An RNA of 207 nucleotides, treated with DMS and 2A3 and read out base by base. DMS adducts were read by reverse transcription with MarathonRT. The reactions ran in a buffer of 150 mM KOAc, 10 mM MgCl2 and 150 mM bicine (pH 8.5), at 24 C. For DMS, 7,959 sequencing reads were counted.

[RMDB]
RNA sequence: GGGAACGACUCGAGUAGAGUCGAAAAGCGUACUACCCUAGACAUGCUUUAGGUGGGUAGCUAUUUCCCAAAUAGGAAAUAGCUAUAAUCCACCGAAGAGCAACAGCUAGGGUAUCGCAAAGGCUAGAUAGCCUGAUUCGUCAGGCUAUCUAGCCAACCCAUAUUUAUGAUUCGUCAUAAAUAUGGGAAAAGAAACAACAACAACAAC
Reactivity to DMS in 0.01 (KOAc 150mM, MgCl2 10mM, bicine 150mM(pH8.5), 24C), signal-to-noise 3, nucleotides 027 to 156: g000c020g030u020a070c060u010a000c000c000c000u000a010g020a090c040a300u000g010c000u000u000u000a300g020g050u000g000g020g030u000a020g000c010u000a000u000u000u000c010c000c040a030a190a230u010a030g010g010a020a020a010u000a000g000c000u000a020u010a160a100u000c000c000a020c000c000g000a070a220g000a040g020c010a050a090c110a110g000c000u000a010g000g020g020u000a000u000c000g000c020a070a100a090g020g010c000u000a020g000a000u010a040g040c000c000u010g010a020u000u000c300g020u000c000a020g020g000c000u000a000u000c000u010a000g010c020c000a010a020
Reactivity to 2A3 in 0.01 (KOAc 150mM, MgCl2 10mM, bicine 150mM(pH8.5), 24C), signal-to-noise 5, nucleotides 027 to 156: g000c000g040u080a090c080u010a010c020c000c000u010a010g060a140c060a130u070g010c010u250u300u040a010g000g010u000g000g010g000u000a000g000c000u000a000u000u010u020c020c030c030a190a280a130u300a080g000g000a000a000a000u000a000g010c010u000a000u070a120a130u070c000c000a000c000c000g000a010a000g000a000g010c010a030a080c060a030g030c000u000a000g000g020g000u000a000u020c000g000c000a080a080a020g000g000c000u000a000g000a000u000a000g000c000c000u000g000a010u020u140c220g070u010c080a000g010g000c000u000a000u000c000u000a000g000c000c000a000a010